[RMDB]
RNA sequence: GGGAACGACUCGAGUAGAGUCGAAAAAUAUCGACUAAUGGCAAUUGAGGUAUAACAACAUCAUUGAUGAGUACACCUGCAAUAUUACUUAAUACAUAAAUAGGCGCUUUUAAUGAUGAUGCAAUAACCUGUUACGUGUUUUCGAACACGUAACAGGAAAAGAAACAACAACAACAAC
Reactivity to 2A3 in 0.01 (KOAc 150mM, MgCl2 10mM, bicine 150mM(pH8.5), 24C), signal-to-noise 4, nucleotides 027 to 126: a030u190a010u030c020g010a020c030u100a110a030u100g090g000c060a030a110u050u070g060a020g110g030u050a060u030a100a020c040a020a010c000a010u030c000a050u000u090g040a050u030g000a050g010u040a030c060a030c070c020u010g050c020a020a110u060a030u190u130a030c050u070u130a100a010u110a180c110a080u210a060a140a070u140a150g040g000c040g000c030u000u020u000u060a020a010u030g030a020u000g000a000u060g010c000a090a030u040a160a060
Reactivity to DMS in 0.01 (KOAc 150mM, MgCl2 10mM, bicine 150mM(pH8.5), 24C), signal-to-noise 2, nucleotides 027 to 126: a030u050a030u060c120g000a090c010u020a020a120u010g000g000c030a050a100u040u020g030a040g020g000u020a050u010a150a040c060a120a140c000a000u000c000a030u000u000g000a010u010g000a050g050u000a150c220a150c020c010u000g000c070a090a020u020a080u020u010a090c140u000u000a060a150u000a080c110a000u030a030a040a050u010a020g000g080c140g000c000u050u000u000u000a050a000u000g000a020u000g000a000u010g030c080a010a030u060a140a130
This 177-nucleotide RNA was probed chemically with 2A3 and DMS. Reactivities are rounded to 0.1 and cut off at 0 and 3. Conditions: 150 mM KOAc, 10 mM MgCl2 and 150 mM bicine (pH 8.5), 24 C.